[RMDB]
RNA sequence: GGGAACGACUCGAGUAGAGUCGAAAAGAUAUGGAAUCCCAAGUUGACGAGAUAUCGGUCGGAAACGACCGUAUAUCGAUGAGUCAGAGGGAUUCCUAAGUCAAACUGAACGGUUCGCCGUUCAGAACUGUAUCACUCUGUUCGCAGAGUGAUACAGAAAAGAAACAACAACAACAAC
Reactivity to DMS in 0.01 (KOAc 150mM, MgCl2 10mM, bicine 150mM(pH8.5), 24C), signal-to-noise 5, nucleotides 027 to 126: g000a020u000a080u000g000g000a010a000u000c000c000c000a120a270g040u010u010g020a010c000g000a090g000a020u000a000u000c020g000g010u000c000g010g000a020a030a030c010g020a010c000c000g010u010a000u000a000u000c000g020a170u020g010a260g010u010c000a060g000a290g020g010g000a010u000u000c000c000u000a010a070g000u000c010a130a110a270c000u000g000a010a010c000g000g010u000u010c300g020c020c000g000u000u000c000a010g000a090a140
Reactivity to 2A3 in 0.01 (KOAc 150mM, MgCl2 10mM, bicine 150mM(pH8.5), 24C), signal-to-noise 3, nucleotides 027 to 126: g010a010u000a010u050g000g000a000a000u010c030c010c010a050a050g300u140u130g020a020c080g100a020g000a300u000a000u020c000g030g010u000c000g000g030a020a000a010c000g000a010c000c000g010u030a010u000a000u000c010g010a170u190g130a040g010u020c010a000g170a080g090g010g000a010u000u000c000c000u000a000a000g020u010c050a040a070a170c010u030g000a000a000c010g000g070u060u120c300g040c110c010g010u010u000c000a000g000a050a030